[RMDB]
RNA sequence: GGGAACGACUCGAGUAGAGUCGAAAAGGCCAAGCCGACCGACCGUGCCCACCAGGUGCGGGUGAUCUGCGGUAACGGGCUGCGGCCGGAGAUCUGGGAUGAGUUCACCACCCGCUUCGGGGUCGCGCACGCAGCUGAAUUUCGAUUCAGCUGCGUGAAAAGAAACAACAACAACAAC
Reactivity to DMS in 0.01 (KOAc 150mM, MgCl2 10mM, bicine 150mM(pH8.5), 24C), signal-to-noise 2, nucleotides 027 to 126: g030g010c020c010a150a090g010c020c010g000a140c030c020g010a170c020c020g010u000g000c060c010c040a160c260c160a130g000g030u020g000c010g020g030g000u000g000a050u000c040u030g020c030g010g000u000a070a080c130g030g000g000c000u000g020c070g000g000c010c000g060g000a060g000a040u010c040u000g020g010g010a110u000g000a110g010u020u000c090a150c070c000a120c030c000c000g000c060u000u000c030g030g020g000g040u020c040g000c110g020
Reactivity to 2A3 in 0.01 (KOAc 150mM, MgCl2 10mM, bicine 150mM(pH8.5), 24C), signal-to-noise 1, nucleotides 027 to 126: g050g000c030c000a020a000g020c000c010g030a050c020c060g030a040c000c000g040u050g030c020c020c010a180c020c070a110g040g010u050g040c050g020g020g000u040g070a060u090c090u130g040c010g010g020u050a120a060c090g090g020g000c030u060g020c140g010g000c010c040g010g010a030g000a030u080c150u260g050g040g030a140u140g040a010g130u190u120c060a050c040c020a010c000c000c020g000c000u050u010c050g080g000g000g060u020c020g020c020g030